[RMDB]
RNA sequence: GGGAACGACUCGAGUAGAGUCGAAAACUGCCUGCAACCAAGAAAUGCUCACAAAGCUACAUCCAGUACCAACCAGUCAUCAGAGCCUACGACACAGCAACACUCUUGAACAGCAACAUCGCUCACUUCGAAGUGAUGCGAAACAGGCUCGACCAGGCAUUCAAGGUGUCUUCGGACACCUUGAAUGAAAAGAAACAACAACAACAAC
Reactivity to 2A3 in 0.01 (KOAc 150mM, MgCl2 10mM, bicine 150mM(pH8.5), 24C), signal-to-noise 3, nucleotides 027 to 156: c020u070g030c000c010u030g010c030a020a010c020c010a040a010g060a080a180a040u110g020c040u040c060a130c060a060a120a040g030c010u040a020c010a040u020c050c020a020g010u070a050c010c010a020a030c000c010a030g100u060c020a090u060c050a060g010a010g010c000c000u090a060c100g110a030c040a010c020a100g020c000a000a040c010a010c010u080c070u040u030g030a040a020c080a200g040c000a020a160c000a300u160c190g020c010u010c000a050c010u020u060c040g000a020a020g010u000g000a060u050g000c000g030a000a000a010c030a000g030g000c000u010c000g000a000c000c020a040g100g000
Reactivity to DMS in 0.01 (KOAc 150mM, MgCl2 10mM, bicine 150mM(pH8.5), 24C), signal-to-noise 1, nucleotides 027 to 156: c060u000g010c020c050u000g010c030a080a100c030c020a040a160g020a090a130a040u000g040c020u040c000a300c070a130a140a110g030c010u000a050c040a080u000c000c040a110g040u000a060c060c000a110a130c020c040a100g050u000c060a070u000c050a050g030a080g030c000c000u000a080c000g000a240c120a080c080a190g000c040a090a060c010a070c020u000c110u010u060g020a130a070c090a080g020c010a070a020c110a070u000c000g000c050u000c030a090c170u010u000c190g000a040a030g000u000g000a080u000g060c000g010a090a060a010c120a030g010g030c000u000c000g010a090c000c000a050g030g070